Overview: Chemical mapping of a 207-nucleotide RNA with 2A3. The 2A3 profile rests on 1,090 reads.
RNA sequence: GGGAACGACUCGAGUAGAGUCGAAAACAUUACGAAUUCAGUCGCAAAUUGUAGAAUUAGCUACUCUACGAUUUAGUGAGCGUUAGUAACGUUGUAAUAUAAUAUAGUGUUUGGAAGGAUUAUAUUGGAGCCGCGGACAAGUUCGCUUGUCCGCGAACUACGACAAGUUCUUCGGAACUUGUCGUAGAAAAGAAACAACAACAACAAC
Reactivity to 2A3 in 0.01 (KOAc 150mM, MgCl2 10mM, bicine 150mM(pH8.5), 24C), signal-to-noise 2, nucleotides 027 to 156: c020a030u070u190a010c030g060a070a180u190u130c050a100g120u050c020g000c040a000a000a000u000u010g000u000a000g000a030a020u080u040a030g050c040u040a020c000u000c000u020a000c000g030a000u030u030u110a080g010u020g030a030g050c020g010u030u080a070g030u050a090a010c090g000u010u000g010u050a100a100u080a050u040a250a080u060a010u000a060g030u050g060u110u090u120g030g000a030a010g030g000a000u000u010a030u060a010u070u070g060g070a080g030c020c010g000c000g000g000a000c000a000a000g000u050u100c160g040c170u000u000g000u000c030c010g000c000g010a000a000
The reactions ran in a buffer of 150 mM KOAc, 10 mM MgCl2 and 150 mM bicine (pH 8.5), at 24 C. The data come from the RNA Mapping Database (RMDB), library M2RFPK.